[RMDB]
RNA sequence: GGGAACGACUCGAGUAGAGUCGAAAAUUGAGGUUUACAUCACCCACCAGGACCUGGCCGCUGCUGCAGCGUUCCAUCACCAGAAUGAGUUUGAGCAGGGUGCUCUUGCCGGCGCCCGAAUGGCCGGUGUCCUAUAACUUUUCGAAGUUAUAGGACAAAAAGAAACAACAACAACAAC
Reactivity to DMS in 0.01 (KOAc 150mM, MgCl2 10mM, bicine 150mM(pH8.5), 24C), signal-to-noise 5, nucleotides 027 to 126: u010u010g010a090g000g000u010u010u010a100c120a090u000c060a080c020c010c010a160c130c090a080g020g000a070c070c020u000g020g010c080c030g020c130u000g020c030u000g020c030a060g010c040g010u000u000c020c030a080u000c100a070c090c080a110g000a050a050u000g010a100g000u000u010u000g010a080g020c030a140g000g010g030u000g000c020u000c040u000u010g000c190c110g000g000c020g010c020c020c030g010a040a030u010g010g010c000c010g000g020
Reactivity to 2A3 in 0.01 (KOAc 150mM, MgCl2 10mM, bicine 150mM(pH8.5), 24C), signal-to-noise 3, nucleotides 027 to 126: u060u070g050a080g060g060u070u100u190a060c050a070u090c010a050c000c000c000a010c020c030a040g040g070a040c020c040u060g010g010c000c010g030c060u060g010c010u040g100c010a020g000c000g020u040u040c010c010a070u060c010a020c020c010a010g060a100a050u100g010a050g130u040u200u120g040a020g020c020a040g050g000g070u060g020c020u010c010u070u080g110c070c030g020g020c010g010c020c020c020g020a040a020u080g020g010c010c010g000g000

An RNA of 177 nucleotides, treated with DMS and 2A3 and read out base by base. For 2A3 the reverse transcriptase was SuperScript II with manganese. It was measured as part of the RMDB library OK2TST. For DMS, 9,388 sequencing reads were counted. The RNA was probed in 150 mM KOAc, 10 mM MgCl2 and 150 mM bicine (pH 8.5) at 24 C. Values cover nucleotides 27 to 126.